[RMDB]
RNA sequence: GGGAACGACUCGAGUAGAGUCGAAAAGACGCACGAGUGCAGCGUCAAGCUAGGCGACUCCGGGUCUAGCAAGUACUCGAAGGUUGGCGAAAGACACCACGUCAACCAACCGGAGAAGGUGUCAGAAGGGUACCUGCUAGUUCGCUAGUAGGUACCCAAAAGAAACAACAACAACAAC
Reactivity to DMS in 0.01 (KOAc 150mM, MgCl2 10mM, bicine 150mM(pH8.5), 24C), signal-to-noise 3, nucleotides 027 to 126: g000a030c000g030c030a100c090g000a100g000u030g030c090a150g030c000g010u010c020a030a150g010c030u000a010g040g000c010g000a100c030u000c010c000g000g000g010u000c000u000a000g000c030a110a060g020u050a030c020u000c010g000a100a090g000g000u020u000g030g000c010g000a100a110a080g000a080c120a040c140c080a210c030g000u000c000a000a010c080c040a040a040c000c050g000g000a050g000a150a130g000g010u010g010u000c060a070g030a170a170
Reactivity to 2A3 in 0.01 (KOAc 150mM, MgCl2 10mM, bicine 150mM(pH8.5), 24C), signal-to-noise 6, nucleotides 027 to 126: g010a010c020g030c030a030c120g120a080g160u220g060c100a040g020c030g020u020c050a000a010g000c000u000a000g010g000c020g100a100c020u000c010c010g020g010g000u000c000u010a000g000c000a030a020g080u070a060c050u030c110g060a130a050g000g010u000u000g000g000c010g070a180a030a030g070a030c040a010c050c020a030c010g010u000c000a000a000c000c010a010a030c010c000g020g010a020g010a020a040g030g010u030g020u040c020a010g050a120a080